RNA sequence: GGGAACGACUCGAGUAGAGUCGAAAAGAAAGAGGUAGUGUCUGUGUAGGUAAUCUCAUGCGGUAACUGUGAGCGUGUGAAAAACUAUGGCUCAUAUUACCUCGUGGGAUUUCCCACCCACUACCAAUGGCCUGUUGUAGUUCGCUACAACAGGCCAAAAAGAAACAACAACAACAAC
Reactivity to 2A3 in 0.01 (KOAc 150mM, MgCl2 10mM, bicine 150mM(pH8.5), 24C), signal-to-noise 2, nucleotides 027 to 126: g120a010a080a010g160a040g030g000u000a000g010u000g000u010c080u190g080u070g050u030a000g050g030u000a000a000u000c000u000c020a000u010g040c020g040g000u010a070a060c100u140g020u020g010a000g020c050g000u080g010u060g080a170a110a070a000a000c090u110a030u110g250g000c000u000c000a000u000a000u020u010a020c030c000u020c020g000u000g010g000g000a000u020u000u010c010c000c000a000c000c020c000a000c000u000a000c000c000a000a000
About this RNA: Chemical mapping of a 177-nucleotide RNA with 2A3. For 2A3, 848 sequencing reads were counted. It was measured as part of the RMDB library RFM100.